This 177-nucleotide RNA was probed chemically with 2A3 and DMS.
The data come from the RNA Mapping Database (RMDB), library TTRDEL.
2A3 adducts were read by reverse transcription with SuperScript II with manganese.
Conditions: 150 mM KOAc, 10 mM MgCl2 and 150 mM bicine (pH 8.5), 24 C.
Reactivities are given for positions 27 through 126.

[RMDB]
RNA sequence: GGGAACGACUCGAGUAGAGUCGAAAAGAUAUGGAUGAUGCAUGGACGCGCUACCUCGGAAACGAGGUAGAACUACGAACUACGUUCUGUGAUGUCAUCCUAAGUCAAACCUAGGUUCGCCUAGGAACCUGGGUUUGGAGUUCGCUCCAAACCCAGGAAAAGAAACAACAACAACAAC
Reactivity to 2A3 in 0.01 (KOAc 150mM, MgCl2 10mM, bicine 150mM(pH8.5), 24C), signal-to-noise 2, nucleotides 027 to 126: g040a000u080a020u120g020g000a020u020g000a000u030g000c000a010u010g000g050a050c070g010c010g030c010u000a010c000c000u040c000g000g040a060a060a070c000g000a020g010g000u000a010g000a030a000c000u090a060c050g200a250a110c130u170a050c170g080u180u050c010u000g050u020g150a300u050g010u000c000a010u000c020c000u030a050a020g010u000c020a050a120a130c000c000u000a010g040g040u020u040c300g080c030c010u030a020g000g000a020a050
Reactivity to DMS in 0.01 (KOAc 150mM, MgCl2 10mM, bicine 150mM(pH8.5), 24C), signal-to-noise 1, nucleotides 027 to 126: g000a020u000a160u000g000g010a000u000g030a020u000g010c010a020u010g010g000a030c010g010c150g000c010u000a000c000c010u000c000g000g020a110a040a190c000g000a000g000g000u000a000g000a030a050c230u020a200c100g010a090a120c130u020a160c060g000u030u000c000u000g010u000g000a090u000g000u000c000a000u010c000c000u000a010a030g000u000c040a030a070a150c010c010u000a000g000g000u000u010c020g020c050c040u000a070g000g000a030a050